[RMDB]
RNA sequence: GGGAACGACUCGAGUAGAGUCGAAAAGCUGGUGUGACCGCGCAAGGUGCGCGCGGUACGUAUCGAGCAGCGCUCAACUCUGAAAAACAUCAAGACCAUGUGUCUCUAACUGUGCCACUCUGUGGUUACCCAUAAUACACUUCGGUGUAUUAUGGGUAAAAGAAACAACAACAACAAC
Reactivity to DMS in 0.01 (KOAc 150mM, MgCl2 10mM, bicine 150mM(pH8.5), 24C), signal-to-noise 2, nucleotides 027 to 126: g020c020u000g050g030u000g020u020g010a060c000c010g030c000g030c000a160a140g020g040u000g040c230g000c010g030c000g020g000u000a050c010g030u000a030u000c070g000a050g030c050a080g000c050g020c020u000c050a080a030c110u000c000u020g020a060a040a060a060a060c110a060u000c140a100a080g000a050c040c020a090u020g000u000g020u000c000u000c160u000a090a070c140u020g010u000g000c020c030a030c010u020c170u010g000u000g000g000u000u000
Reactivity to 2A3 in 0.01 (KOAc 150mM, MgCl2 10mM, bicine 150mM(pH8.5), 24C), signal-to-noise 2, nucleotides 027 to 126: g020c000u020g030g010u040g010u050g020a010c000c000g000c000g000c020a060a110g290g130u250g150c070g000c010g000c000g040g000u010a040c000g000u010a030u040c040g020a000g000c000a000g030c010g040c030u020c010a000a000c020u040c010u080g020a090a050a020a000a050c040a090u140c050a070a000g040a050c020c000a130u190g060u040g050u010c010u020c020u050a050a090c020u080g040u090g070c000c000a020c030u240c080u160g020u000g040g030u000u030
This 177-nucleotide RNA was probed chemically with DMS and 2A3. Values cover nucleotides 27 to 126. For DMS, 1,070 sequencing reads were counted. For 2A3 the reverse transcriptase was SuperScript II with manganese. Conditions: 150 mM KOAc, 10 mM MgCl2 and 150 mM bicine (pH 8.5), 24 C. For 2A3, 1,871 sequencing reads were counted. DMS adducts were read by reverse transcription with MarathonRT. It was measured as part of the RMDB library 15KREP.